[RMDB]
RNA sequence: GGGAACGACUCGAGUAGAGUCGAAAACACACAAUUCACAUACGAAAGCUAAGCAACUUCUUCAGAAGCUACGCAUUAGUCUAUAAGUAUAAGACACACCACAUAUACGAUAUUGAACGUGGCUAUACCUUGACAGUGGAUUCGUCCACUGUCAAGGAAAAGAAACAACAACAACAAC
Reactivity to 2A3 in 0.01 (KOAc 150mM, MgCl2 10mM, bicine 150mM(pH8.5), 24C), signal-to-noise 3, nucleotides 027 to 126: c070a000c020a020c030a030a040u170u080c050a110c030a110u050a050c050g060a120a020a000g000c020u040a010a050g000c020a050a070c010u010u000c010u160u140c030a050g010a040a000g000c030u090a030c070g020c030a230u030u040a020g050u020c030u150a150u020a110a030g020u020a010u000a060a030g130a000c020a000c010a010c040c050a060c060a000u160a010u060a100c120g110a120u050a080u220u170g060a080a010c080g000u010g010g060c040u110a110u040a180
Reactivity to DMS in 0.01 (KOAc 150mM, MgCl2 10mM, bicine 150mM(pH8.5), 24C), signal-to-noise 2, nucleotides 027 to 126: c070a140c180a050c100a060a100u000u000c050a130c110a120u030a040c010g010a090a150a040g000c020u010a050a040g000c020a020a070c030u000u000c010u000u010c230a130g000a010a020g000c030u010a020c150g050c050a040u000u000a020g010u010c030u000a020u000a040a130g000u000a030u000a080a110g020a060c190a040c070a150c040c050a010c030a040u010a130u020a040c100g010a100u000a100u010u000g000a010a090c110g000u000g000g000c050u010a130u010a050